[RMDB]
RNA sequence: GGGAACGACUCGAGUAGAGUCGAAAAUGGUGUUUUUUCUUCUUCACCGUCAUCAUUGAACAUGAUCAUGGGAUCACUGGGUUCUUCACCAUGCAGACAAUACGGGACCUUUUCCAACCUAACGAUAGCUGCGCGUUUUCUAUCAUGUCUAUGAUUCCCAUCUCACUCACUUCGGUGAGUGAGAUGGAAAAGAAACAACAACAACAAC
Reactivity to 2A3 in 0.01 (KOAc 150mM, MgCl2 10mM, bicine 150mM(pH8.5), 24C), signal-to-noise 1, nucleotides 027 to 156: u080g060g000u000g000u040u040u000u010u000u040c000u040u010c030u090u040c050a070c070c020g080u110c000a050u000c000a000u010u100g100a130a000c020a010u000g030a020u050c030a090u120g000g000g090a030u070c020a040c160u090g150g000g000u060u050c050u080u030c010a060c060c000a020u150g010c000a010g070a150c060a080a170u160a160c000g000g060g010a040c000c000u060u040u110u000c070c020a010a060c020c010u030a070a000c070g080a100u040a090g020c050u050g010c030g030c030g050u000u070u030u100c020u040a060u030c000a010u040g060u070c030u080a030u050g000a040u070u110c030
This 207-nucleotide RNA was probed chemically with 2A3.